[RMDB]
RNA sequence: GGGAACGACUCGAGUAGAGUCGAAAAUCAAAGGACAGUGCGCCAAGCCACAGCAUAUUUUGCCCGAUACCCAUUGCGGCAGAAUGGUAGUCAUCAUCAGAAAUCAGCAGGCCGCCGUACAGCGAGGACUCUCUAUUGGAUUCGUCCAAUAGAGAGUAAAAGAAACAACAACAACAAC
Reactivity to 2A3 in 0.01 (KOAc 150mM, MgCl2 10mM, bicine 150mM(pH8.5), 24C), signal-to-noise 4, nucleotides 027 to 126: u050c000a020a020a010g070g020a020c020a040g030u020g040c050g000c030c010a040a020g010c020c000a070c030a010g050c040a030u040a060u160u060u050u060g020c010c000c000g040a040u120a150c000c030c000a040u030u130g040c070g000g000c010a000g040a050a030u050g050g020u070a070g040u030c020a030u020c000a010u030c010a090g090a080a130a020u050c020a020g060c010a010g060g000c020c010g020c010c010g020u050a050c020a020g010c020g040a030g030g060
Reactivity to DMS in 0.01 (KOAc 150mM, MgCl2 10mM, bicine 150mM(pH8.5), 24C), signal-to-noise 8, nucleotides 027 to 126: u010c080a060a130a130g010g000a070c070a050g010u000g010c080g020c030c050a080a140g010c030c040a050c080a100g010c050a060u000a040u000u000u000u000g010c010c010c010g000a090u000a110c100c050c060a200u000u000g020c120g010g000c020a020g010a040a040u010g010g010u000a050g000u010c050a040u000c060a040u000c060a070g010a050a070a070u000c060a060g000c050a090g010g000c040c030g000c040c040g000u000a050c080a050g010c070g010a100g010g000

This 177-nucleotide RNA was probed chemically with 2A3 and DMS.
For 2A3, 9,953 sequencing reads were counted.
DMS adducts were read by reverse transcription with MarathonRT.
Reactivities are given for positions 27 through 126.
The RNA was probed in 150 mM KOAc, 10 mM MgCl2 and 150 mM bicine (pH 8.5) at 24 C.
Source: RMDB library OK2TRN, as collected in RNAgym.